Annotation
This 177-nucleotide RNA was probed chemically with DMS and 2A3. DMS adducts were read by reverse transcription with MarathonRT. For 2A3, 4,240 sequencing reads were counted. 2A3 is a SHAPE reagent: it acylates the 2'-hydroxyl of flexible nucleotides of all four kinds. 2A3 adducts were read by reverse transcription with SuperScript II with manganese. The RNA was probed in 150 mM KOAc, 10 mM MgCl2 and 150 mM bicine (pH 8.5) at 24 C.

[RMDB]
RNA sequence: GGGAACGACUCGAGUAGAGUCGAAAAACAGCCGAGGUCGAUGGGUGUGAGACGAACGCUCCUGAGACUUUGGAGUGUCGUGGUGUUCGACCCAGAAUGCACGACCAAGAUGCCCUCUCUUGUGGGCCACUGACCCCUAGUUCGCUAGGGGUCAGUGAAAAGAAACAACAACAACAAC
Reactivity to DMS in 0.01 (KOAc 150mM, MgCl2 10mM, bicine 150mM(pH8.5), 24C), signal-to-noise 3, nucleotides 027 to 126: a170c190a060g000c010c000g020a030g000g010u020c000g010a300u000g000g000g000u000g000u030g000a160g020a190c200g010a110a060c010g050c000u030c000c000u030g000a300g040a040c070u000u020u000g000g000a120g040u000g000u000c000g030u000g050g000u050g020u010u020c000g000a160c010c030c000a100g000a060a020u010g020c020a100c000g010a020c000c070a190a090g000a170u030g000c000c000c040u020c090u040c060u020u020g000u020g010g010g010c000
Reactivity to 2A3 in 0.01 (KOAc 150mM, MgCl2 10mM, bicine 150mM(pH8.5), 24C), signal-to-noise 5, nucleotides 027 to 126: a000c090a030g040c000c000g010a020g020g000u000c010g010a040u040g010g010g060u000g010u050g050a180g030a060c150g060a210a040c010g010c010u120c040c010u060g040a050g000a050c000u010u000u030g010g000a040g000u160g000u010c010g000u010g110g130u090g060u050u030c040g030a150c010c000c000a010g010a020a010u080g020c000a010c020g000a000c000c000a020a020g070a090u130g000c000c030c000u050c000u040c030u090u200g040u080g050g000g010c000